[RMDB]
RNA sequence: GGGAACGACUCGAGUAGAGUCGAAAAUGCUAGCGAUCCCAUGAUGUCUAGACGAUCGCUAGGAUCUCGUACCACUAGCGACUAGGAUCUGAUCACUGAUCCUGAUCGCAUAUAUCAUGGCGUACCGCUCUAGGUAGGAUUUCGAUCCUACCUAGAGAAAAGAAACAACAACAACAAC
Reactivity to DMS in 0.01 (KOAc 150mM, MgCl2 10mM, bicine 150mM(pH8.5), 24C), signal-to-noise 8, nucleotides 027 to 126: u000g000c010u000a020g010c000g010a020u000c010c070c020a080u000g010a060u010g020u000c130u010a130g000a130c220g000a020u000c000g010c000u000a000g000g000a040u000c050u010c100g000u010a140c070c060a120c200u000a100g010c000g020a020c030u000a010g000g010a010u000c000u000g000a170u010c290a130c190u010g010a010u000c010c010u000g010a030u000c010g000c020a090u010a050u000a050u000c040a020u000g000g000c110g010u000a080c030c050g010
Reactivity to 2A3 in 0.01 (KOAc 150mM, MgCl2 10mM, bicine 150mM(pH8.5), 24C), signal-to-noise 8, nucleotides 027 to 126: u070g020c010u000a000g010c000g010a010u000c020c030c030a040u070g030a030u050g120u110c150u140a070g020a160c110g010a040u010c000g000c010u000a000g010g020a010u010c070u020c070g030u070a090c010c040a060c130u080a030g000c000g000a000c020u030a010g000g010a010u000c010u030g090a210u260c090a070c300u070g010a000u010c000c000u010g000a060u000c010g000c020a010u040a000u000a010u060c050a040u030g020g000c030g030u030a030c020c020g030